[RMDB]
RNA sequence: GGGAACGACUCGAGUAGAGUCGAAAACCAACAGUGAUGACCACAACAUGCCAUCUGAGUUGCUUUGCUGAAAUCCAGAGGCUGUUUCUGAGCUGAAAAUCUCUCCUUUUCUUCGGAAAAGGAGAGACACAUCAGGAAUGUUCGCAUUCCUGAUGUGAAAAGAAACAACAACAACAAC
Reactivity to 2A3 in 0.01 (KOAc 150mM, MgCl2 10mM, bicine 150mM(pH8.5), 24C), signal-to-noise 5, nucleotides 027 to 126: c000c000a010a020c020a010g020u020g070a050u060g030a030c020c080a090c120a130a020c010a030u220g000c020c010a300u020c020u020g090a100g140u070u050g070c070u120u130u220g090c170u100g090a100a080a050u030c020c000a010g000a010g040g000c010u010g000u000u050u000c020u030g030a020g010c010u040g060a060a060a060a090u000c000u010c000u000c000c000u000u000u010u030c010u010u060c190g090g000a000a000a000a000g000g000a000g000a000g000a000
Reactivity to DMS in 0.01 (KOAc 150mM, MgCl2 10mM, bicine 150mM(pH8.5), 24C), signal-to-noise 4, nucleotides 027 to 126: c010c000a150a240c060a060g010u000g010a160u000g000a090c300c120a050c210a020a040c060a030u000g020c000c010a120u000c010u010g000a070g000u000u010g010c040u010u000u010g010c100u000g000a050a040a030u000c040c000a040g020a060g010g020c010u000g000u010u000u000c030u000g000a300g010c050u000g000a070a060a070a160u000c000u000c020u000c000c000u000u000u000u000c000u000u010c240g020g000a000a000a000a010g000g000a000g000a000g000a020
This 177-nucleotide RNA was probed chemically with 2A3 and DMS.
The 2A3 profile rests on 6,227 reads.
The reactions ran in a buffer of 150 mM KOAc, 10 mM MgCl2 and 150 mM bicine (pH 8.5), at 24 C.
For 2A3 the reverse transcriptase was SuperScript II with manganese.